This 177-nucleotide RNA was probed chemically with DMS and 2A3. The DMS profile rests on 2,059 reads. For 2A3 the reverse transcriptase was SuperScript II with manganese. The reactions ran in a buffer of 150 mM KOAc, 10 mM MgCl2 and 150 mM bicine (pH 8.5), at 24 C. For 2A3, 2,412 sequencing reads were counted.
RNA sequence: GGGAACGACUCGAGUAGAGUCGAAAAGACACGGCGAGCUGUACAAGAACGGCACCCUCUACGCCAAGGGCCAGUGGGGCUCGAACCCGAUCAACGUCGGCUUCGGCGUGAUGGCCGACUCCACUGAACUGGAGUGGGUAUUCGUACCCACUCCAGUAAAAGAAACAACAACAACAAC
Reactivity to DMS in 0.01 (KOAc 150mM, MgCl2 10mM, bicine 150mM(pH8.5), 24C), signal-to-noise 3, nucleotides 027 to 126: g000a110c100a120c140g010g000c000g000a090g010c020u000g000u010a080c150a140a160g000a110a050c070g000g010c040a120c040c020c000u010c050u000a090c070g000c020c040a130a110g010g000g010c120c040a050g030u000g000g010g000g010c210u000c030g010a030a090c130c010c070g000a050u000c080a050a040c090g040u020c000g010g020c250u000u010c010g050g000c020g020u000g000a050u000g010g000c090c010g010a020c020u000c010c000a020c020u000g020a130
Reactivity to 2A3 in 0.01 (KOAc 150mM, MgCl2 10mM, bicine 150mM(pH8.5), 24C), signal-to-noise 2, nucleotides 027 to 126: g080a050c020a010c070g020g000c050g020a020g020c020u050g030u160a050c040a100a190g070a130a010c040g000g000c000a040c000c010c010u000c030u060a050c040g000c020c010a030a060g000g030g000c000c000a010g010u030g000g020g010g000c000u020c040g020a040a030c020c010c000g060a020u020c020a060a160c020g010u000c000g050g080c170u300u280c060g030g020c020g010u010g020a020u030g030g010c000c000g000a010c040u050c010c010a030c010u030g090a110